[RMDB]
Chemical mapping of a 177-nucleotide RNA with 2A3 and DMS. DMS adducts were read by reverse transcription with MarathonRT. The DMS profile rests on 1,762 reads.
RNA sequence: GGGAACGACUCGAGUAGAGUCGAAAAGAAAGGGACCCCUGCCACGGGACGCAGCCAGUCGAGCCCAGGCAUGUUUUUGCAUGCCGGACUGACCCCUACUGCGGGCAGGAGGGGUGGUCCCGAAAGAGCGCACUAAUUAUUUCGAUAAUUAGUGCGCAAAAGAAACAACAACAACAAC
Reactivity to 2A3 in 0.01 (KOAc 150mM, MgCl2 10mM, bicine 150mM(pH8.5), 24C), signal-to-noise 1, nucleotides 027 to 126: g000a000a080a000g000g010g000a040c020c000c040c010u030g040c000c000a100c070g150g130g000a020c010g040c000a010g020c070c020a000g000u050c030g130a080g000c000c000c000a000g000g030c000a020u000g160u010u300u120u190u300g000c020a010u020g000c030c020g020g000a000c000u010g020a020c010c010c010c030u040a020c000u030g010c060g070g080g090c010a000g000g020a020g050g010g020g010u030g000g010u040c010c000c010g010a020a020a000g050a020
Reactivity to DMS in 0.01 (KOAc 150mM, MgCl2 10mM, bicine 150mM(pH8.5), 24C), signal-to-noise 2, nucleotides 027 to 126: g010a070a120a170g000g010g000a050c010c010c300c000u000g020c010c010a170c160g010g010g020a170c080g000c010a010g000c110c300a020g000u000c010g010a050g020c000c000c040a110g020g010c000a010u000g000u000u000u030u020u020g020c000a020u000g010c000c020g010g020a000c000u010g020a090c010c020c050c040u000a100c030u000g020c050g010g000g030c020a030g000g000a060g010g000g000g040u010g000g010u010c000c000c000g000a030a080a090g020a160
For 2A3, 1,031 sequencing reads were counted. It was measured as part of the RMDB library OK2TRN. Conditions: 150 mM KOAc, 10 mM MgCl2 and 150 mM bicine (pH 8.5), 24 C.